This 177-nucleotide RNA was probed chemically with 2A3 and DMS. The data come from the RNA Mapping Database (RMDB), library OK2TST. The reactions ran in a buffer of 150 mM KOAc, 10 mM MgCl2 and 150 mM bicine (pH 8.5), at 24 C. For DMS, 2,509 sequencing reads were counted.

[RMDB]
RNA sequence: GGGAACGACUCGAGUAGAGUCGAAAACAAUAAAAGAUUUUGUGGUAUAAUAGUAUUAUCUCUCCUGUUAGUUCAAACGGAAGAACAUCGACCUUCUAAGUCGCAGGUUACUGGUUCGAGUCCAGUACCAUAUCGACUAGUUCGCUAGUCGAUAUGGAAAAGAAACAACAACAACAAC
Reactivity to 2A3 in 0.01 (KOAc 150mM, MgCl2 10mM, bicine 150mM(pH8.5), 24C), signal-to-noise 3, nucleotides 027 to 126: c010a010a040u250a140a180a080a090g040a060u020u110u180u170g030u050g050g050u080a060u010a240a140u080a080g070u030a040u160u010a030u120c010u000c020u010c030c010u040g020u070u090a060g070u070u090c030a050a050a070c090g040g030a060a010g000a020a040c020a060u070c040g020a050c020c020u160u190c070u130a110a000g030u000c010g000c030a000g010g090u030u040a020c010u000g000g020u010u020c010g020a010g030u000c000c010a010g000u000a020
Reactivity to DMS in 0.01 (KOAc 150mM, MgCl2 10mM, bicine 150mM(pH8.5), 24C), signal-to-noise 4, nucleotides 027 to 126: c040a060a080u030a070a080a110a180g000a150u000u000u000u010g010u010g000g030u010a030u000a070a070u010a110g000u010a300u010u010a050u000c040u000c070u000c000c010u010g010u000u000a100g020u000u010c130a040a080a070c080g000g030a060a070g000a050a080c100a100u010c040g010a040c030c020u000u010c100u000a130a120g000u000c040g000c160a060g000g000u000u000a000c010u000g010g000u000u000c150g000a300g000u010c010c010a010g000u000a070